The record gives the reactivity of an RNA of 207 nucleotides to DMS and 2A3.
DMS (dimethyl sulfate) methylates the pairing face of unpaired adenines and cytosines.
The RNA was probed in 150 mM KOAc, 10 mM MgCl2 and 150 mM bicine (pH 8.5) at 24 C.
RNA sequence: GGGAACGACUCGAGUAGAGUCGAAAAUUCACAGAACGGAUCUGCAGCUGUUGGCCGUUGGCCAAGUCUUGUUGAUAGAAACACUGAUGAUUGGGAAAACUUUGCCUAUUCUCUUGGUUAUGAGCCAAAUUACAACCGAACUGCAAGUGCUCACAGGCAAGAAGGAGGGAUUCGUCCCUCCUUCUUGAAAAGAAACAACAACAACAAC
Reactivity to DMS in 0.01 (KOAc 150mM, MgCl2 10mM, bicine 150mM(pH8.5), 24C), signal-to-noise 2, nucleotides 027 to 156: u000u000c060a120c060a130g000a070a130c080g010g010a110u010c030u000g000c040a070g030c040u030g010u000u000g010g010c060c080g000u000u000g040g050c000c010a030a090g020u010c030u000u000g020u000u000g010a110u000a090g000a190a090a070c030a070c040u000g010a100u000g000a080u010u030g010g020g000a060a050a050a100c060u000u010u010g020c040c030u010a110u010u010c030u000c030u000u000g020g030u000u020a020u000g020a080g020c010c050a050a050a120u000u010a080c040a010a110c060c060g000a060a300c060u010g010c020a030a090g030u010g010c000u000c030a090c040a100g030g000
Reactivity to 2A3 in 0.01 (KOAc 150mM, MgCl2 10mM, bicine 150mM(pH8.5), 24C), signal-to-noise 3, nucleotides 027 to 156: u050u040c010a010c020a040g090a080a050c050g040g050a020u030c010u090g000c010a010g020c010u030g070u100u040g030g030c060c090g140u110u160g020g000c000c020a030a010g040u090c050u090u100g030u040u100g040a090u030a150g100a060a090a000c020a010c060u050g020a030u030g000a030u120u170g060g010g000a010a100a050a040c080u170u110u090g010c000c010u020a050u070u050c060u000c000u040u030g030g000u100u040a050u180g080a040g000c000c000a040a060a090u130u080a100c050a040a030c040c010g090a070a030c040u050g010c050a070a020g090u050g060c030u020c010a070c040a070g070g000